[RMDB]
RNA sequence: GGGAACGACUCGAGUAGAGUCGAAAACGCGCCGUCGCCAGGUCGCCGUUCGCGGCGAACACGAUCGUGGCGGCCGAGCUCACCAUCGUGUCCGGGUGUGGGCCCAGCCAGCCGAACAACUCGGCUGCCUCGGGAUGAGGUUCGCCUCAUCCCGAGGAAAAGAAACAACAACAACAAC
Reactivity to 2A3 in 0.01 (KOAc 150mM, MgCl2 10mM, bicine 150mM(pH8.5), 24C), signal-to-noise 3, nucleotides 027 to 126: c000g060c020g000c010c010g000u040c000g020c020c020a000g000g040u000c000g010c020c030g020u000u050c280g020c040g130g010c000g000a050a010c190a080c040g110a130u170c080g020u020g000g010c000g000g000c000c030g000a010g010c030u020c030a040c020c020a070u100c030g050u050g130u260c090c050g060g030g000u050g010u030g030g030g000c000c020c000a040g070c010c010a000g010c000c000g030a120a070c080a090a090c120u000c020g000g000c010u000g040
Reactivity to DMS in 0.01 (KOAc 150mM, MgCl2 10mM, bicine 150mM(pH8.5), 24C), signal-to-noise 1, nucleotides 027 to 126: c030g000c190g100c020c050g020u000c030g020c010c100a120g000g010u000c040g000c000c000g040u000u020c090g000c000g040g040c000g000a070a050c000a130c080g000a030u040c000g000u000g000g060c010g000g060c000c000g020a030g000c030u000c030a020c000c040a090u000c060g000u020g000u020c040c040g000g020g090u000g000u050g000g020g000c000c040c020a160g030c150c000a020g000c030c000g000a020a300c110a060a200c210u040c000g000g030c000u000g030